[RMDB]
RNA sequence: GGGAACGACUCGAGUAGAGUCGAAAAGCAUGUCUCAUCCCCAACAGGUCCGCGAUGACCAGUGGGUGGAGCCGUCUGACCAAUUGCAGGGCACCGCCGUAUUCGACGCCACCGGGGACAAGGCCACGCUUGCAUCAGGAUUCGUCCUGAUGCAAGCAAAAGAAACAACAACAACAAC
Reactivity to DMS in 0.01 (KOAc 150mM, MgCl2 10mM, bicine 150mM(pH8.5), 24C), signal-to-noise 2, nucleotides 027 to 126: g000c080a080u000g010u000c010u010c010a210u010c030c000c000c050a100a070c140a150g000g000u000c000c050g030c250g030a060u010g000a040c030c050a060g030u010g010g010g040u020g010g020a040g040c020c010g000u000c030u000g010a160c060c090a100a060u000u000g020c050a080g000g040g010c000a160c110c070g000c010c020g000u000a020u000u000c030g020a040c110g000c020c000a090c070c020g000g010g010g030a050c050a060a090g040g010c020c110a100c160
Reactivity to 2A3 in 0.01 (KOAc 150mM, MgCl2 10mM, bicine 150mM(pH8.5), 24C), signal-to-noise 2, nucleotides 027 to 126: g020c080a120u090g070u000c020u010c010a100u060c040c000c010c000a040a080c050a050g000g040u030c000c030g200c050g140a160u110g030a030c010c040a020g120u090g020g020g000u010g070g000a020g020c040c010g140u010c000u020g040a150c040c070a200a280u140u190g000c020a070g000g000g050c010a020c050c030g060c010c000g020u050a130u070u130c030g050a050c010g040c000c000a000c010c000g000g010g060g000a030c010a070a010g070g010c020c000a070c090
Structure probing data (DMS and 2A3) for a 177-nucleotide construct. DMS adducts were read by reverse transcription with MarathonRT. Conditions: 150 mM KOAc, 10 mM MgCl2 and 150 mM bicine (pH 8.5), 24 C. Source: RMDB library OK2TST, as collected in RNAgym. 2A3 adducts were read by reverse transcription with SuperScript II with manganese.